Structure probing data (2A3) for a 207-nucleotide construct.

RNA sequence: GGGAACGACUCGAGUAGAGUCGAAAACGAUCAGUACGUUCGCGUACUGAUCGAAGCUACUGGAGACAGUAGCAAGUCUAAGACCUUGUUAAGAGGAAACAAGGAAAAAUGGAGGAAGGUCGGACCUCCAUACUUAGACAACCUCUAACCGACCAAAGAUCACCACCUCCUUCGGGAGGUGGUGAUCAAAAGAAACAACAACAACAAC
Reactivity to 2A3 in 0.01 (KOAc 150mM, MgCl2 10mM, bicine 150mM(pH8.5), 24C), signal-to-noise 1, nucleotides 027 to 156: c010g000a000u010c010a000g000u010a010c000g050u060u060c250g010c000g110u000a000c020u010g000a000u020c000g000a000a000g000c000u000a000c000u000g000g000a000g020a020c010a000g000u000a000g010c000a020a050g000u000c000u000a000a000g000a090c000c000u000u000g020u030u080a160a110g210a080g090g110a110a010a010c000a000a000g000g000a010a130a010a030a010u040g010g010a020g010g010a190a140g020g000u010c060g000g160a300c000c000u000c000c000a020u000a030c000u000u000a000g000a010c000a030a090c010c020u060c060u040a000a000c000c000g000a000c000c000a000a020a000